The data come from the RNA Mapping Database (RMDB), library OK3TST. Structure probing data (2A3) for a 207-nucleotide construct. High 2A3 reactivity points to a flexible backbone, as in loops and unpaired stretches. For 2A3 the reverse transcriptase was SuperScript II with manganese.
RNA sequence: GGGAACGACUCGAGUAGAGUCGAAAAGUAUGGCCUCCACCCAAAUGCUGAAAUAGAAUUCCUGACAGUGACAUCCAACACUCUCUUCAGAACUUUGCUGGAGAUGCAGCCCAGGAAUGCACUCAGUGGUGAUGAACUGGGGCAGUCUACAGAAGAAUCCGACUAUCGCGUUCGCGCGAUAGUCGGAAAAAGAAACAACAACAACAAC
Reactivity to 2A3 in 0.01 (KOAc 150mM, MgCl2 10mM, bicine 150mM(pH8.5), 24C), signal-to-noise 1, nucleotides 027 to 156: g010u030a120u120g030g020c000c010u000c050c010a050c030c000c020a000a070a030u140g000c030u030g020a040a020a010u100a050g140a080a040u050u030c000c000u020g030a030c010a020g010u020g020a010c000a160u010c040c020a040a020c070a020c010u000c000u000c010u030u020c000a020g000a180a240c120u090u200u260g060c000u010g010g010a000g010a060u040g000c040a030g040c020c020c010a010g050g000a090a050u040g010c050a050c130u040c000a060g040u070g130g090u040g050a060u030g050a090a020c040u010g000g000g030g000c010a000g100u000c040u050a010c030a020g020a050a010g020a080a040